Conditions: 150 mM KOAc, 10 mM MgCl2 and 150 mM bicine (pH 8.5), 24 C.
An RNA of 177 nucleotides, treated with DMS and 2A3 and read out base by base.
It was measured as part of the RMDB library OK2TST.
RNA sequence: GGGAACGACUCGAGUAGAGUCGAAAAAGUUUUGCCAAAACUCGUUACGAUAACGUGGAUGCGUUCAGGUGUACUUAAAUCGAUAGCGUGCCGUUCUUUGCGCACCUGUUGAGUUUUUAAUAUCACGUGAGACGAAGAAUUUCGAUUCUUCGUCUCAAAAAGAAACAACAACAACAAC
Reactivity to DMS in 0.01 (KOAc 150mM, MgCl2 10mM, bicine 150mM(pH8.5), 24C), signal-to-noise 4, nucleotides 027 to 126: a080g010u010u000u020u010g010c060c040a060a050a060a070c020u000c040g020u000u000a080c120g000a110u010a050a090c050g010u000g010g020a080u000g010c030g010u000u010c100a060g010g010u000g020u000a060c150u010u000a010a030a040u010c060g000a060u000a050g010c150g010u000g020c030c040g010u010u010c130u010u000u000g020c090g000c010a010c010c010u000g010u000u000g000a060g000u010u010u010u000u010a030a080u000a100u010c090a050c110g010
Reactivity to 2A3 in 0.01 (KOAc 150mM, MgCl2 10mM, bicine 150mM(pH8.5), 24C), signal-to-noise 2, nucleotides 027 to 126: a020g020u090u020u080u160g130c020c010a050a030a050a070c100u080c050g050u090u030a050c160g030a090u070a220a060c070g020u030g100g000a060u160g040c030g000u000u060c010a030g060g000u020g020u040a060c040u040u050a000a060a070u010c030g010a010u040a020g070c030g050u000g040c040c010g020u150u040c050u030u070u120g010c070g030c010a010c020c000u010g000u020u030g000a000g020u010u000u000u020u020a130a120u110a070u120c020a010c040g050

For DMS, 4,429 sequencing reads were counted.